[RMDB]
The record gives the reactivity of an RNA of 207 nucleotides to 2A3 and DMS. DMS adducts were read by reverse transcription with MarathonRT.
RNA sequence: GGGAACGACUCGAGUAGAGUCGAAAAAUAGUUAAGGUUGCGCUUGCCUAUUUAGGCAUACUUCUCAGGAUGGCGCGUUGCAGUCCAACAAGAUCCAGGGACUGUACAGAAUUUUCGUAUACCUCGAAAAACAUUCGCUUGUUCGCAAGCGAAUGAAUCGAAAUAACUAGUUCGCUAGUUAUUUCGAAAAAGAAACAACAACAACAAC
Reactivity to 2A3 in 0.01 (KOAc 150mM, MgCl2 10mM, bicine 150mM(pH8.5), 24C), signal-to-noise 5, nucleotides 027 to 156: a000u160a010g030u100u070a140a040g050g050u090u120g000c000g020c040u050u050g020c010c010u090a210u100u210u220a030g000g000c010a000u050a080c040u080u090c040u020c070a050g100g000a110u120g030g010c010g010c000g010u010u060g000c000a010g000u000c010c000a070a030c050a220a120g080a180u070c070c060a050g020g000g000a000c000u000g010u010a010c010a020g200a170a130u090u020u030u040c010g000u030a020u030a160c020c060u030c040g040a040a010a010a040a020c010a000u010u000c000g010c000u010u000g020u050u050c170g010c110a000a000g000c000g000a000a000u000g000a010a020
Reactivity to DMS in 0.01 (KOAc 150mM, MgCl2 10mM, bicine 150mM(pH8.5), 24C), signal-to-noise 3, nucleotides 027 to 156: a140u000a080g000u000u000a100a120g020g020u000u000g010c010g030c100u010u000g010c030c030u000a230u000u000u000a030g020g030c020a040u010a030c060u000u000c020u010c090a150g010g000a060u000g020g020c060g050c090g030u000u000g010c010a060g020u000c010c000a080a200c060a090a140g010a110u000c060c090a180g000g010g020a020c010u000g000u000a080c070a170g020a070a090u000u000u000u000c080g010u000a100u000a060c050c020u010c040g000a060a060a070a110a190c010a040u000u000c000g020c010u000u010g020u010u010c280g040c030a010a010g010c000g020a010a010u000g010a040a070